RNA sequence: GGGAACGACUCGAGUAGAGUCGAAAAAGUGAGGCUUAUCCCGGGGAUCGGCGUCGCCCCCACAUAGCAGACCCCGGGUCCCCUUCCGAACGAGGGGGACGGUCCUUGGACCUCAGGGGGCCCAUGGCAAACUCAGCCUUCGGGCUGAGUAAAAGAAACAACAACAACAAC
Reactivity to 2A3 in 0.01 (KOAc 150mM, MgCl2 10mM, bicine 150mM(pH8.5), 24C), signal-to-noise 4, nucleotides 027 to 129: a000g160u090g030a050g040g020c030u070u080a050u150c000c000c000g000g000g010g000a300u040c000g020g000c020g060u070c100g030c000c000c000c020c000a030c000a090u180a030g030c030a000g000a030c000c000c000c000g010g010g000u000c000c020c010c000u000u010c070c030g120a100a040c090g010a000g010g000g000g000g010a000c010g000g020u050c000c000u010u130g070g030a090c010c000u100c030a070g080g000g000g020g000c000c000c000a060u070g020g000c050a060a030
Reactivity to DMS in 0.01 (KOAc 150mM, MgCl2 10mM, bicine 150mM(pH8.5), 24C), signal-to-noise 3, nucleotides 027 to 129: a130g000u030g020a060g030g080c050u020u040a060u060c100c050c000g000g040g060g000a240u000c060g000g040c030g000u020c120g050c000c000c000c000c000a180c250a000u000a090g060c010a090g010a070c060c010c010c000g090g050g000u020c000c000c000c000u000u020c000c110g030a110a300c190g020a030g000g040g020g020g030a000c140g020g040u030c020c020u000u000g000g000a110c010c070u000c080a070g000g000g010g000g000c000c020c040a030u050g000g030c080a080a070